Overview:
This 170-nucleotide RNA was probed chemically with DMS and 2A3. The 2A3 profile rests on 48,833 reads. DMS (dimethyl sulfate) methylates the pairing face of unpaired adenines and cytosines. For DMS, 26,188 sequencing reads were counted. Conditions: 150 mM KOAc, 10 mM MgCl2 and 150 mM bicine (pH 8.5), 24 C.
RNA sequence: GGGAACGACUCGAGUAGAGUCGAAAAUUCCAUUGACCCACUGCUCGAGGACGUCCUCCCUGUCUCCUCGGUUCUUCUUCGAUCCGGACCGGCUCAUCUCGGCAAGGGGCGGCAGUCCUCAGUACUCACCGCUUGCGGUUCGCCGCAAGCAAAAGAAACAACAACAACAAC
Reactivity to DMS in 0.01 (KOAc 150mM, MgCl2 10mM, bicine 150mM(pH8.5), 24C), signal-to-noise 5, nucleotides 027 to 129: u040u040c100c120a100u010u070g030a060c020c020c040a070c090u030g020c000u010c060g040a000g030g040a090c070g000u020c000c000u000c000c040c020u030g010u010c000u030c040c030u030c030g010g030u010u000c050u000u060c060u060u070c150g050a020u030c070c030g000g000a050c120c050g000g000c070u050c030a110u030c030u030c050g000g030c070a100a100g010g000g000g010c080g000g060c140a070g000u000c030c050u000c040a060g000u050a090c020u040c090a030c110c080
Reactivity to 2A3 in 0.01 (KOAc 150mM, MgCl2 10mM, bicine 150mM(pH8.5), 24C), signal-to-noise 9, nucleotides 027 to 129: u100u020c050c010a030u020u160g100a060c020c020c020a080c070u040g010c000u030c100g000a020g010g030a080c000g030u030c000c000u030c000c000c000u020g020u010c040u030c040c010u050c020g030g010u030u010c020u160u010c000u080u100c110g120a140u050c040c040g010g010a030c010c000g020g000c030u040c060a140u030c070u040c070g020g000c040a080a120g040g010g000g000c030g000g000c020a060g010u010c000c000u010c000a010g010u040a060c020u030c050a110c020c090